[RMDB]
RNA sequence: GGGAACGACUCGAGUAGAGUCGAAAAGUCGGAAUACCGAAGAGGUCGAUCGUCGCGCAUCAAAACGGGGGAAGAACUCAGACGGUGGACGCCGCUGCCGUAGCGCGACUGUCCGCGGGCAGAGUCCGCGGUGUUGGACGCCUCGCGAUCCAUGGCGAAGCACACGUCUAUUCGUAGACGUGUGCUUAAAAGAAACAACAACAACAAC
Reactivity to 2A3 in 0.01 (KOAc 150mM, MgCl2 10mM, bicine 150mM(pH8.5), 24C), signal-to-noise 2, nucleotides 027 to 156: g050u040c030g040g050a180a050u110a220c020c000g080a100a030g070a010g040g020u080c090g070a130u100c070g000u000c000g030c000g000c030a060u070c110a160a010a060a150c060g000g020g000g010g070a030a110g020a140a040c030u030c040a020g040a150c010g000g000u040g110g000a070c080g020c020c000g020c020u060g000c000c010g030u060a010g010c010g000c000g000a010c000u010g050u020c000c000g000c000g000g000g050c130a160g060a040g270u000c000c000g000c000g000g000u040g000u000u040g000g010a020c070g010c030c000u020c040g040c050g050a060u020c040c000a100u230g030g000c000g020
Reactivity to DMS in 0.01 (KOAc 150mM, MgCl2 10mM, bicine 150mM(pH8.5), 24C), signal-to-noise 1, nucleotides 027 to 156: g010u090c020g010g000a120a160u000a120c070c000g020a090a150g020a080g000g020u010c080g020a180u000c090g010u000c000g070c030g050c040a220u030c100a060a030a070a060c040g000g020g110g000g030a120a140g030a050a080c050u000c090a250g000a090c020g030g060u010g010g010a090c000g030c090c050g030c020u000g050c000c060g000u000a100g000c020g000c000g030a020c000u000g010u000c020c000g000c020g000g000g000c020a160g000a200g000u000c000c000g000c040g020g060u000g020u000u000g000g000a140c030g000c010c000u000c000g000c030g000a120u000c000c040a090u010g010g010c010g000